Structure probing data (2A3) for a 207-nucleotide construct. 2A3 adducts were read by reverse transcription with SuperScript II with manganese. Values cover nucleotides 27 to 156.
RNA sequence: GGGAACGACUCGAGUAGAGUCGAAAAUACAGUCUUCUCCCCGACGGUUUCAAUCCAUAGCUUCACGUUGUGUAGCGUAGGUGGAAGGUAUCGUGUGGUGUAUAAACACCACAUAGUCUCUUAGGGGUCAAGCUGAUAAACUUCGGUUUAUCAGCAACUCGACAGUUCGUUUCGACGAACUGUCGAGAAAAGAAACAACAACAACAAC
Reactivity to 2A3 in 0.01 (KOAc 150mM, MgCl2 10mM, bicine 150mM(pH8.5), 24C), signal-to-noise 1, nucleotides 027 to 156: u210a040c050a000g100u060c010u130u020c000u060c030c000c020c000g060a040c050g070g080u000u130u230c070a140a130u050c080c000a020u040a090g010c000u070u110c010a010c030g300u260u170g040u200g020u130a030g020c000g150u170a160g020g110u040g040g000a030a030g000g060u060a060u180c110g000u040g020u000g000g070u000g080u040a080u050a140a210a010c000a000c000c000a020c020a020u020a020g030u000c060u000c000u080u140a020g000g000g040g000u000c070a050a000g000c000u000g000a000u000a000a000a000c000u040u000c110g110g020u020u010u000a000u010c000a000g000c000a000a000